[RMDB]
RNA sequence: GGGAACGACUCGAGUAGAGUCGAAAAGGACUGCGCAGUCCGGCAACAUCAGCAGAGAGCCCGCUAUACGUGACGGAUUGGCUGAAGCGUACAGAAAUAUUGAGCCUCCUGCAAGAGGCUGCCAAGCAAAACGUACGUGAGUUCGCUCACGUACGAAGAGACGAUAAAGGUUCGCCUUUAUCGUCUCAAAAGAAACAACAACAACAAC
Reactivity to 2A3 in 0.01 (KOAc 150mM, MgCl2 10mM, bicine 150mM(pH8.5), 24C), signal-to-noise 4, nucleotides 027 to 156: g030g010a030c040u060g020c100g050c110a040g030u020c000c000g040g000c010a040a050c010a160u120c030a020g010c050a030g100a000g000a020g110c040c070c080g020c040u080a060u030a100c050g010u040g050a010c020g040g040a130u100u150g120g000c020u030g010a050a020g020c000g020u000a040c040a030g150a060a170a030u280a150u160u140g040a030g010c000c000u020c000c030u040g090c040a080a030g020a040g010g000c010u000g000c010c000a030a060g000c020a040a100a060a050c010g000u020a000c000g000u020g000a000g010u090u140c180g000c070u000c000a000c010g000u000a000c000g000a010a000
Reactivity to DMS in 0.01 (KOAc 150mM, MgCl2 10mM, bicine 150mM(pH8.5), 24C), signal-to-noise 1, nucleotides 027 to 156: g000g010a030c010u010g060c160g060c020a110g040u010c010c000g000g020c020a080a070c020a050u000c010a160g000c000a070g000a080g010a110g000c000c000c000g080c020u000a080u000a060c040g020u000g000a300c020g030g000a300u000u010g000g000c020u010g010a030a300g000c000g000u000a060c020a030g010a030a140a240u000a140u000u000g000a060g000c000c000u000c000c050u040g040c180a180a070g010a040g040g000c000u000g000c090c020a050a060g050c080a060a090a100a180c020g000u020a000c000g000u000g020a030g000u000u030c300g000c020u000c000a000c020g000u000a000c000g000a010a020